Source: RMDB library M2RFPK, as collected in RNAgym. Chemical mapping of a 207-nucleotide RNA with 2A3. Reactivities are given for positions 27 through 156. The RNA was probed in 150 mM KOAc, 10 mM MgCl2 and 150 mM bicine (pH 8.5) at 24 C. For 2A3, 504 sequencing reads were counted.
[RMDB]
RNA sequence: GGGAACGACUCGAGUAGAGUCGAAAAGAAUCACCGUACCUAUUUAGGUUUACGCUCCAAGAUCGGUGGAUAGCAGCCCUAUCAAUAUCUAGGAGAACUGUGCUAUGUUUAGAUGAUUAGGUAGUCUAUUACACAGCCAUGUUCGCAUGGCUGUGAAGUUCGACUUUCGAUUCGUCGAAAGUCGAACAAAAGAAACAACAACAACAAC
Reactivity to 2A3 in 0.01 (KOAc 150mM, MgCl2 10mM, bicine 150mM(pH8.5), 24C), signal-to-noise 1, nucleotides 027 to 156: g000a010a060u120c000a000c010c000g120u030a030c010c040u090a100u300u240u260a030g000g000u050u080u000a060c060g000c020u000c040c000a020a020g000a070u010c050g000g050u010g170g000a050u050a000g030c100a000g000c000c050c040u060a120u090c010a040a040u030a010u160c010u040a000g020g010a050g030a090a090c000u060g030u040g020c020u130a040u200g060u060u080u000a060g000a030u020g080a070u070u110a040g110g000u010a020g050u040c000u000a040u030u170a090c010a000c010a000g000c000c000a000u040g000u000u010c130g020c190a020u000g000g030c000u000g000u000g000a000a000